An RNA of 207 nucleotides, treated with 2A3 and DMS and read out base by base. The RNA was probed in 150 mM KOAc, 10 mM MgCl2 and 150 mM bicine (pH 8.5) at 24 C. Values cover nucleotides 27 to 156.
[RMDB]
RNA sequence: GGGAACGACUCGAGUAGAGUCGAAAAGGCUGAUGCCGGAGCCGAUACCGGAAUACGAGACCUUAUGUGCGGUCGAAUGCACUGAAGUACGAAAGUACGAAGAGGUCAUACCGAGGACCGAGACUCGAUAUGCUCGAUAGAUGGAGCUUUACAUCAACGGUAUUACUCCAUUCGUGGAGUAAUACCGAAAAGAAACAACAACAACAAC
Reactivity to 2A3 in 0.01 (KOAc 150mM, MgCl2 10mM, bicine 150mM(pH8.5), 24C), signal-to-noise 3, nucleotides 027 to 156: g030g020c030u050g030a100u140g080c030c010g020g000a000g000c030c090g050a020u080a090c000c020g010g020a050a030u130a070c080g020a020g040a100c020c000u080u060a050u060g040u020g000c010g020g030u080c080g030a040a040u120g020c010a000c030u030g040a120a010g010u000a000c010g030a110a040a020g000u000a010c010g010a060a020g030a010g010g000u020c010a000u030a050c030c020g020a040g040g000a040c050c000g050a030g040a060c010u000c020g030a050u030a030u120g010c000u010c020g070a100u070a110g060a000u080g020g000a010g020c000u070u130u060a080c040a060u070c060a060a040
Reactivity to DMS in 0.01 (KOAc 150mM, MgCl2 10mM, bicine 150mM(pH8.5), 24C), signal-to-noise 2, nucleotides 027 to 156: g000g030c030u030g020a110u000g000c000c000g010g000a100g030c030c050g070a190u030a080c000c000g040g040a130a080u000a040c040g020a270g000a040c030c020u010u000a090u010g030u020g040c010g010g000u000c160g000a140a090u000g000c000a030c050u010g000a160a190g000u000a050c070g000a190a150a150g020u000a020c000g010a150a130g010a110g030g000u010c030a150u000a080c010c030g000a010g080g010a200c060c070g000a170g020a210c050u010c000g000a030u000a020u000g000c060u000c030g000a130u010a120g010a120u000g000g020a090g000c000u000u000u020a060c140a050u000c060a030a280
For 2A3, 2,216 sequencing reads were counted.